This 177-nucleotide RNA was probed chemically with DMS and 2A3. DMS adducts were read by reverse transcription with MarathonRT. Values cover nucleotides 27 to 126. The RNA was probed in 150 mM KOAc, 10 mM MgCl2 and 150 mM bicine (pH 8.5) at 24 C.

RNA sequence: GGGAACGACUCGAGUAGAGUCGAAAACAAAACCAUGGUGAUGACACCUAAGGUAUGUGCUGGAAUCAAACAGCUACUGAUGAAGAAUUUGAACCAGUAUAUCGAGAAGAUGACCCCUUCUUCAUCAACGAAGAAUCUAAUUCGUUAGAUUCUUCGUAAAAGAAACAACAACAACAAC
Reactivity to DMS in 0.01 (KOAc 150mM, MgCl2 10mM, bicine 150mM(pH8.5), 24C), signal-to-noise 9, nucleotides 027 to 126: c060a060a070a110a070c020c030a110u020g000g020u010g010a270u040g010a170c020a010c010c000u010a120a100g000g010u000a060u000g010u000g010c000u000g000g010a150a100u000c060a040a040a110c300a080g020c090u020a060c150u020g000a010u010g000a020a010g010a020a030u010u000u010g000a040a150c030c010a030g010u000a060u020a030u010c050g000a130g010a100a100g010a050u000g000a130c050c010c010c060u000u000c000u000u000c000a020u000c020a070
Reactivity to 2A3 in 0.01 (KOAc 150mM, MgCl2 10mM, bicine 150mM(pH8.5), 24C), signal-to-noise 9, nucleotides 027 to 126: c030a000a070a010a010c010c010a080u090g000g010u020g020a300u290g080a130c010a010c020c000u070a220a120g020g000u030a040u070g040u030g000c000u000g000g050a110a160u070c030a040a030a070c030a070g100c070u120a070c050u090g020a030u010g010a010a010g010a020a030u080u070u090g020a050a030c010c010a010g030u020a060u010a020u140c080g040a040g040a300a060g050a100u110g070a100c000c000c000c000u010u000c000u010u010c010a020u010c010a000